An RNA of 207 nucleotides, treated with 2A3 and read out base by base. Reactivities are given for positions 27 through 156. Source: RMDB library OK3TST, as collected in RNAgym. Conditions: 150 mM KOAc, 10 mM MgCl2 and 150 mM bicine (pH 8.5), 24 C. For 2A3 the reverse transcriptase was SuperScript II with manganese. For 2A3, 499 sequencing reads were counted.
RNA sequence: GGGAACGACUCGAGUAGAGUCGAAAAGGUGUUACCAAAACAGAUUAUGUCAUCUGAGAAUAGGUGUUACCAACACAGGGGUUCGGGCUAGGUCCUGCAUCUUGCAGCACAGAAAGCCAAUUACUGAGAUGAUGAUUAUUGCCAAGGAAGAAGGCUACCUCCUAUAGGCCUUCGGGCCUAUAGGAGGAAAAGAAACAACAACAACAAC
Reactivity to 2A3 in 0.01 (KOAc 150mM, MgCl2 10mM, bicine 150mM(pH8.5), 24C), signal-to-noise 1, nucleotides 027 to 156: g080g000u060g040u090u120a050c010c010a030a070a000a070c020a000g010a050u140u180a220u300g100u200c070a010u060c010u040g000a060g140a110a200u110a080g070g000u020g010u050u070a110c060c000a080a050c070a010c040a040g030g010g000g000u000u010c020g010g220g050c000u010a000g070g000u000c000c000u040g040c000a000u010c030u090u050g020c090a010g030c030a040c010a140g010a000a000a000g010c020c020a000a000u120u070a040c060u130g060a040g010a270u190g010a060u110g020a020u040u000a010u010u070g000c000c000a010a030g000g000a000a000g070a030a000g000g000c000u010a040